[RMDB]
About this RNA: Structure probing data (2A3 and DMS) for a 177-nucleotide construct. The data come from the RNA Mapping Database (RMDB), library OK2TRN. For DMS the reverse transcriptase was MarathonRT. The reactions ran in a buffer of 150 mM KOAc, 10 mM MgCl2 and 150 mM bicine (pH 8.5), at 24 C.
RNA sequence: GGGAACGACUCGAGUAGAGUCGAAAAACGAUGUUGUGUCAGAGCUGGCCAACAAAUUGCUGAGGGACCAGGCGCUUGAUCUUCUGGUUGCGCUGGAAGACGAUCUGGGUGCUGACUCUGCCCUGCAGACCUACAACUAUUUCGAUAGUUGUAGGUCAAAAGAAACAACAACAACAAC
Reactivity to 2A3 in 0.01 (KOAc 150mM, MgCl2 10mM, bicine 150mM(pH8.5), 24C), signal-to-noise 6, nucleotides 027 to 126: a000c050g040a070u080g000u030u020g060u020g020u040c020a020g030a060g270c160u040g000g000c010c010a020a010c030a010a150a030u190u160g030c060u080g050a060g020g020g050a060c020c030a040g060g000c070g020c080u140u190g050a150u140c010u060u000c010u050g030g030u060u210g060c150g010c050u000g000g030a020a010g010a020c030g020a040u020c040u090g060g000g020u060g030c020u020g010a040c000u000c030u050g030c010c000c010u020g010c020a030
Reactivity to DMS in 0.01 (KOAc 150mM, MgCl2 10mM, bicine 150mM(pH8.5), 24C), signal-to-noise 6, nucleotides 027 to 126: a120c100g010a150u010g020u000u000g010u010g020u010c010a050g010a120g020c120u000g010g010c010c030a030a040c040a020a070a080u010u000g010c080u000g000a120g000g000g000a130c060c060a100g010g010c070g010c150u000u000g010a100u000c030u010u000c040u010g000g010u010u010g010c180g010c020u000g010g010a050a040g010a060c070g010a080u000c070u010g000g000g010u000g010c020u000g000a080c100u000c030u000g000c010c010c010u010g000c090a180